This 177-nucleotide RNA was probed chemically with 2A3 and DMS. Conditions: 150 mM KOAc, 10 mM MgCl2 and 150 mM bicine (pH 8.5), 24 C. For 2A3, 1,174 sequencing reads were counted. For 2A3 the reverse transcriptase was SuperScript II with manganese.

RNA sequence: GGGAACGACUCGAGUAGAGUCGAAAACUUAGAGCUAUCCUGAUAUUAUAGCAUGUAAAUGGAAUGAGCUUUUGUAACAAAAAUAGGUGGUUCUUAAAUUGCAAUGCAAGUGAAUCAGUAAAGAGAACAUUAUGGCUGGAUUCGUCCAGCCAUAAUGAAAAGAAACAACAACAACAAC
Reactivity to 2A3 in 0.01 (KOAc 150mM, MgCl2 10mM, bicine 150mM(pH8.5), 24C), signal-to-noise 2, nucleotides 027 to 126: c000u040u030a040g000a050g140c010u020a010u050c030c000u030g040a040u030a100u150u140a100u120a030g020c030a000u070g010u100a050a070a090u110g010g000a110a080u060g050a040g030c000u020u070u050u120g150u120a150a060c070a070a130a060a060a030u070a060g140g030u040g000g040u020u020c020u000u100a150a200a160u050u020g040c020a000a230u060g020c020a060a060g090u020g060a020a050u030c000a010g060u100a010a230a010g050a030g030a090a000
Reactivity to DMS in 0.01 (KOAc 150mM, MgCl2 10mM, bicine 150mM(pH8.5), 24C), signal-to-noise 4, nucleotides 027 to 126: c030u000u010a080g000a110g020c030u010a110u010c070c020u000g000a210u000a080u000u000a100u000a200g030c090a060u000g010u000a050a050a120u010g000g010a050a060u000g000a090g010c020u000u000u000u000g010u000a080a100c130a030a110a080a080a060u010a060g020g030u000g020g030u000u000c020u010u000a030a060a140u010u000g000c040a070a090u000g030c030a040a060g010u010g010a050a010u000c040a020g010u010a040a080a070g000a120g010a070a140